[RMDB]
RNA sequence: GGGAACGACUCGAGUAGAGUCGAAAAAAAAAGAUAUGGAGGCUGAACUACAGCUGAUCACAACUGAUGACCUAACGUCGGAAACGACGUUAGCAAGGUUGUGAGCUGCAGCCUCCUAAGUCAAAAACAUGUUCAAGGAGUUCGCUCCUUGAACAUGAAAAGAAACAACAACAACAAC
Reactivity to DMS in 0.01 (KOAc 150mM, MgCl2 10mM, bicine 150mM(pH8.5), 24C), signal-to-noise 1, nucleotides 027 to 126: a040a030a000a050a000g010a030u010a190u010g000g000a010g020g000c010u000g000a080a070c050u000a300c000a000g010c000u000g010a200u010c020a000c020a000a000c020u000g000a080u010g000a250c300c000u000a010a020c030g040u000c000g010g000a050a020a080c020g010a020c010g000u000u010a000g000c020a060a100g000g050u000u000g000u000g000a040g000c010u000g000c000a010g000c000c000u010c010c000u000a010a120g000u020c000a100a080a110a100a170

Source: RMDB library TTRDES, as collected in RNAgym. An RNA of 177 nucleotides, treated with DMS and read out base by base. The RNA was probed in 150 mM KOAc, 10 mM MgCl2 and 150 mM bicine (pH 8.5) at 24 C. DMS adducts were read by reverse transcription with MarathonRT.